[RMDB]
RNA sequence: GGGAACGACUCGAGUAGAGUCGAAAACAGGGCCGUCUCGGCCCCACACAUUCCGGCCAGCGCGACGCACAAUGCCUCGACAUCAUCGAAUGUGCUCCGGUCGGAGACCAGGCAGCCGAUCAGAGAACUAAUGACGCGUGUUCGCACGCGUCAUUAGAAAAGAAACAACAACAACAAC
Reactivity to DMS in 0.01 (KOAc 150mM, MgCl2 10mM, bicine 150mM(pH8.5), 24C), signal-to-noise 1, nucleotides 027 to 126: c150a280g040g010g050c000c020g000u090c110u010c070g000g000c040c000c110c100a000c180a070c060a140u060u000c100c010g000g000c000c000a060g000c020g000c080g060a010c090g030c030a180c070a060a170u040g020c030c050u000c050g000a040c060a100u050c100a080u000c030g040a000a030u000g020u010g000c010u000c000c000g000g020u030c000g080g000a010g000a080c210c080a100g000g000c060a010g010c000c000g000a040u000c040a120g030a030g000a090a150
Reactivity to 2A3 in 0.01 (KOAc 150mM, MgCl2 10mM, bicine 150mM(pH8.5), 24C), signal-to-noise 4, nucleotides 027 to 126: c030a010g010g010g040c020c010g200u120c120u130c140g090g000c000c020c000c010a060c000a000c010a000u110u020c020c000g030g020c050c000a070g020c030g020c040g160a050c040g080c030a020c050a100a100u140g050c030c020u050c010g070a120c060a150u160c010a040u020c070g080a140a050u110g020u020g040c000u050c000c020g050g010u000c000g000g020a010g000a070c020c000a000g030g000c000a010g000c000c020g020a040u070c020a030g040a000g040a060a040
An RNA of 177 nucleotides, treated with DMS and 2A3 and read out base by base. Conditions: 150 mM KOAc, 10 mM MgCl2 and 150 mM bicine (pH 8.5), 24 C. It was measured as part of the RMDB library OK1LIB. For DMS, 1,277 sequencing reads were counted.